[RMDB]
RNA sequence: GGGAACGACUCGAGUAGAGUCGAAAAGACGCCUGUGUGGCGAAGCGAGCAAUGGCAUAAGCCGCAAUAGAAGAUGAGAUGGAAGCGGCAAGAUAGAAUGCUCGCAACAAGAUCCAUCUCACAGAGACCCUAUGGCUAAUUUCGAUUAGCCAUAGGGAAAAGAAACAACAACAACAAC
Reactivity to DMS in 0.01 (KOAc 150mM, MgCl2 10mM, bicine 150mM(pH8.5), 24C), signal-to-noise 3, nucleotides 027 to 126: g030a150c070g000c000c000u000g010u030g040u040g010g040c000g020a120a090g010c040g030a000g010c060a050a070u020g030g030c110a100u010a070a180g020c000c000g000c050a210a090u070a090g000a070a130g000a170u030g010a000g000a000u000g000g000a010a140g010c000g000g000c000a060a080g010a130u020a080g020a080a030u000g000c000u020c000g000c000a110a070c180a030a120g000a140u000c010c000a000u000c010u000c000a000c060a170g010a190g000a210
Reactivity to 2A3 in 0.01 (KOAc 150mM, MgCl2 10mM, bicine 150mM(pH8.5), 24C), signal-to-noise 5, nucleotides 027 to 126: g070a040c020g030c020c000u210g080u120g090u170g160g000c010g020a060a010g000c010g010a010g000c010a050a150u240g230g020c020a040u040a060a060g000c000c000g000c010a040a080u140a150g130a120a010g120a170u050g000a000g000a000u020g000g010a140a050g000c010g000g000c000a010a040g070a050u110a040g140a110a030u010g000c010u010c030g000c010a000a020c050a000a000g080a020u000c000c000a000u000c000u020c000a010c030a000g170a000g010a060